Overview
The record gives the reactivity of an RNA of 177 nucleotides to DMS and 2A3. For DMS the reverse transcriptase was MarathonRT. The reactions ran in a buffer of 150 mM KOAc, 10 mM MgCl2 and 150 mM bicine (pH 8.5), at 24 C. The DMS profile rests on 1,331 reads. Reactivities are given for positions 27 through 126. 2A3 adducts were read by reverse transcription with SuperScript II with manganese.
RNA sequence: GGGAACGACUCGAGUAGAGUCGAAAAGAAGAUGCCAUCAUGAAAACAUCGGAUGAGGGACGUGGAAAUGAUGGAAAUCACCUAUUGGUUUAGGUGCUGAACGCAGAACCAAUGCGGAACCUCAGGAGGGAAUUCAAAUGUUCGCAUUUGAAUUCCCAAAAGAAACAACAACAACAAC
Reactivity to DMS in 0.01 (KOAc 150mM, MgCl2 10mM, bicine 150mM(pH8.5), 24C), signal-to-noise 1, nucleotides 027 to 126: g020a060a060g000a030u050g000c000c000a000u000c000a000u000g000a050a020a140a020c010a070u000c000g010g000a040u020g030a050g000g010g000a120c130g000u000g000g000a300a280a000u000g110a040u000g070g000a030a070a030u000c190a140c000c060u000a000u100u000g020g000u000u000u000a190g040g000u000g000c040u000g080a030a220c100g040c000a040g020a030a000c010c030a030a000u000g000c060g000g000a100a140c080c050u000c000a060g000g000a300
Reactivity to 2A3 in 0.01 (KOAc 150mM, MgCl2 10mM, bicine 150mM(pH8.5), 24C), signal-to-noise 2, nucleotides 027 to 126: g190a030a000g060a010u090g020c000c000a000u000c000a000u080g110a020a060a000a110c030a070u130c070g040g050a040u190g070a130g070g130g010a040c040g010u040g010g040a120a000a000u050g000a000u000g000g000a040a150a000u000c010a020c020c020u020a010u010u030g060g100u040u030u060a200g070g120u100g000c050u090g180a040a030c120g000c010a000g010a020a020c010c010a000a010u030g030c070g030g000a040a060c020c000u130c060a050g070g030a040